[RMDB]
RNA sequence: GGGAACGACUCGAGUAGAGUCGAAAAGAUAUGGAAGUACCGAGAAGCUGUGGGUGAUGACCUUGAAGAGCUCGGAAACGAGCUCUUCAAGCAAGCCCAUUGCUUCGAUGAGGUACUUCCUAAGUCAGUAAGCAUACACGUUCGCGUGUAUGCUUACAAAAGAAACAACAACAACAAC
Reactivity to DMS in 0.01 (KOAc 150mM, MgCl2 10mM, bicine 150mM(pH8.5), 24C), signal-to-noise 1, nucleotides 027 to 126: g000a070u010a300u050g000g010a020a000g010u000a010c020c020g020a170g010a010a010g000c020u000g030u020g000g000g020u000g000a170u000g000a100c300c030u000u000g010a080a020g000a010g020c010u000c000g000g010a130a110a260c010g000a010g000c000u000c000u020u000c000a000a000g010c050a050a250g000c020c000c010a000u000u020g000c000u000u000c000g000a020u010g030a300g010g020u000a000c010u000u000c000c000u010a030a030g000u010c110a150

Chemical mapping of a 177-nucleotide RNA with DMS.
DMS adducts were read by reverse transcription with MarathonRT.
Values are in units of 0.01, from 0 to 300, in steps of 10.